[RMDB]
RNA sequence: GGGAACGACUCGAGUAGAGUCGAAAACGGUCCUUCACACAAUGGUAUCAUGAGCAUGUUGGUGGUGUCUAUGACAACUCUAUCACAUGCCCAUUGACAGUUGCAGUAAUUGCUGGAGUUGCUGGUGCUAUAUUAUUCUCUUCGGAGAAUAAUAUAGAAAAGAAACAACAACAACAAC
Reactivity to 2A3 in 0.01 (KOAc 150mM, MgCl2 10mM, bicine 150mM(pH8.5), 24C), signal-to-noise 3, nucleotides 027 to 126: c020g030g060u080c010c000u080u130c030a010c000a020c030a050a090u080g010g030u110a040u100c010a020u030g030a010g000c010a010u020g000u050u060g120g000u010g030g000u010g010u000c040u110a200u200g030a030c030a040a070c030u020c020u110a020u020c010a000c000a010u010g030c000c010c010a040u050u070g040a020c010a020g050u060u040g030c020a020g010u110a110a100u130u110g010c030u030g040g040a060g020u070u040g010c030u020g020g050u050g000
Reactivity to DMS in 0.01 (KOAc 150mM, MgCl2 10mM, bicine 150mM(pH8.5), 24C), signal-to-noise 6, nucleotides 027 to 126: c160g010g000u000c060c020u000u000c090a080c100a150c070a040a050u010g000g020u010a110u000c030a040u000g010a040g000c010a020u000g010u000u020g030g010u000g010g020u000g000u000c050u010a120u010g010a090c150a070a050c060u010c010u000a030u000c030a020c020a020u000g000c010c010c000a010u000u000g010a040c090a160g010u010u000g000c030a080g010u000a080a090u000u000g010c040u000g010g010a130g000u000u000g020c030u000g000g010u010g010
Structure probing data (2A3 and DMS) for a 177-nucleotide construct. Conditions: 150 mM KOAc, 10 mM MgCl2 and 150 mM bicine (pH 8.5), 24 C. The DMS profile rests on 9,360 reads. DMS adducts were read by reverse transcription with MarathonRT. 2A3 adducts were read by reverse transcription with SuperScript II with manganese.